[RMDB]
Background: An RNA of 177 nucleotides, treated with DMS and 2A3 and read out base by base. The RNA was probed in 150 mM KOAc, 10 mM MgCl2 and 150 mM bicine (pH 8.5) at 24 C. The DMS profile rests on 960 reads. It was measured as part of the RMDB library TTRDEL. For DMS the reverse transcriptase was MarathonRT.
RNA sequence: GGGAACGACUCGAGUAGAGUCGAAAAGAUAUGGACUGAACUACUGAGUCCCCAGGCGUUGAAAUCGGAAACGAUGGAGCCUGGGUCUCAGCAGUCCUAAGUCAAAAGCCUAGGUUCGCCUAGGCAAGCUUACAGUCAACUUCGGUUGACUGUAAGCAAAAGAAACAACAACAACAAC
Reactivity to DMS in 0.01 (KOAc 150mM, MgCl2 10mM, bicine 150mM(pH8.5), 24C), signal-to-noise 1, nucleotides 027 to 126: g000a050u000a300u000g010g010a010c000u000g000a070a010c030u020a240c010u010g000a010g020u000c270c010c000c050a020g020g010c000g000u010u000g000a050a150a020u010c000g000g000a120a070a140c000g030a000u010g010g000a150g000c040c000u000g050g000g010u000c000u000c010a020g000c000a000g020u010c010c020u030a040a060g010u000c020a080a090a110a180g000c010c000u000a000g000g010u000u010c300g000c000c000u000a000g010g010c010a020a000
Reactivity to 2A3 in 0.01 (KOAc 150mM, MgCl2 10mM, bicine 150mM(pH8.5), 24C), signal-to-noise 1, nucleotides 027 to 126: g040a030u100a050u240g010g010a010c010u020g000a100a010c060u210a030c000u300g010a000g020u050c110c000c000c000a010g000g000c000g300u300u030g070a020a060a010u010c000g000g030a010a050a110c010g030a030u000g030g020a010g020c030c000u000g010g010g000u010c020u000c000a000g000c000a000g010u000c000c010u020a080a010g040u010c060a000a030a090a110g000c000c000u030a010g020g010u050u070c240g000c070c000u000a030g000g010c010a010a000